[RMDB]
RNA sequence: GGGAACGACUCGAGUAGAGUCGAAAAUGGUCAACUCGUCCAGCCCAUCGUCGCCGUGUACCACCAGCACACUGGACCGGCGCGCAGCAAACACCCCGGCCAUCACUUCGGCGAGGUCGGCGAACGCCUACCUGUACCCCUUCGGGGGUACAGGUAGAAAAGAAACAACAACAACAAC
Reactivity to DMS in 0.01 (KOAc 150mM, MgCl2 10mM, bicine 150mM(pH8.5), 24C), signal-to-noise 2, nucleotides 027 to 126: u000g000g000u000c060a120a050c220u000c100g050u010c030c020a050g010c000c000c040a130u020c100g020u000c020g030c020c020g000u030g020u000a060c050c030a110c090c110a120g070c030a040c160a060c080u000g000g000a130c000c030g000g000c020g020c030g040c300a040g010c070a060a040a140c090a070c070c100c000c040g040g000c010c020a070u000c030a040c060u000u000c070g050g030c000g010a030g030g000u000c050g010g000c050g000a050a110c100g000c070
Reactivity to 2A3 in 0.01 (KOAc 150mM, MgCl2 10mM, bicine 150mM(pH8.5), 24C), signal-to-noise 1, nucleotides 027 to 126: u050g000g030u020c050a080a000c100u050c190g040u020c020c010a050g030c000c000c020a050u060c030g160u020c030g000c010c010g030u080g030u140a200c030c030a000c020c010a050g040c010a090c020a050c090u060g010g000a030c010c020g000g030c010g000c020g000c010a060g010c050a040a130a040c030a060c020c020c000c000g010g020c000c000a190u090c000a000c090u140u110c080g070g000c030g040a010g030g020u030c030g010g000c000g070a070a020c020g080c000

The record gives the reactivity of an RNA of 177 nucleotides to DMS and 2A3. For 2A3 the reverse transcriptase was SuperScript II with manganese. Conditions: 150 mM KOAc, 10 mM MgCl2 and 150 mM bicine (pH 8.5), 24 C. For 2A3, 1,350 sequencing reads were counted.